[RMDB]
RNA sequence: GGGAACGACUCGAGUAGAGUCGAAAACAAAACAACAAAAGCGCCGGCUAGCUCCGCGCAAGCAGCCCGAAGGAUGUGGAAAGAACCACAUCCAACAAACAAAACAAAAACAAAGAACAAAACAAAAACCACGUAUAAAUUUCGAUUUAUACGUGGUAAAAGAAACAACAACAACAAC
Reactivity to 2A3 in 0.01 (KOAc 150mM, MgCl2 10mM, bicine 150mM(pH8.5), 24C), signal-to-noise 2, nucleotides 027 to 126: c040a040a120a040a020c040a000a060c040a000a170a110a140g030c000g000c060c100g080g000c030u060a040g020c050u120c060c030g040c000g020c010a000a000g020c020a000g000c000c000c060g040a060a010g020g020a010u000g010u030g010g010a170a270a170g070a120a100c010c000a000c000a000u000c000c020a000a000c000a020a040a000c030a000a050a040a000c030a060a090a020a060a000c040a040a150a010g060a120a000c070a050a100a020a000c050a060a070a060a010